[RMDB]
RNA sequence: GGGAACGACUCGAGUAGAGUCGAAAACCCAGUUCCGGGGCCGUUCACUGGAUCCGAAGCCUCUAGAAGGAUAAUAUAGGCACUCCAUACCCUACUCCGACUCAAUACGUCCCCGUCGUACAGAAUGUACACACCCACUUUUCGAAGUGGGUGUGUAAAAAGAAACAACAACAACAAC
Reactivity to DMS in 0.01 (KOAc 150mM, MgCl2 10mM, bicine 150mM(pH8.5), 24C), signal-to-noise 2, nucleotides 027 to 126: c000c000c000a230g000u030u020c060c000g000g000g000g000c050c090g010u000u010c140a070c020u000g030g000a070u000c010c060g010a140a080g000c020c000u020c030u060a070g000a070a070g000g000a060u000a080a080u020a090u020a130g000g020c010a060c080u020c030c080a030u000a140c060c010c020u000a000c030u000c000c020g000a020c040u000c080a030a150u040a050c040g000u000c000c010c000c040g000u000c080g000u100a030c100a080g050a070a060u060g030
Reactivity to 2A3 in 0.01 (KOAc 150mM, MgCl2 10mM, bicine 150mM(pH8.5), 24C), signal-to-noise 3, nucleotides 027 to 126: c000c000c000a010g040u120u070c030c000g010g000g060g040c030c020g030u060u040c050a010c010u080g030g020a060u070c040c010g020a030a020g090c020c000u000c000u020a100g030a220a010g170g020a050u060a180a000u100a070u080a080g000g010c020a010c040u060c000c000a040u100a230c010c010c000u020a030c000u000c010c000g040a030c010u000c060a010a060u130a070c030g000u010c020c000c010c030g040u050c010g000u000a000c010a010g120a080a100u230g020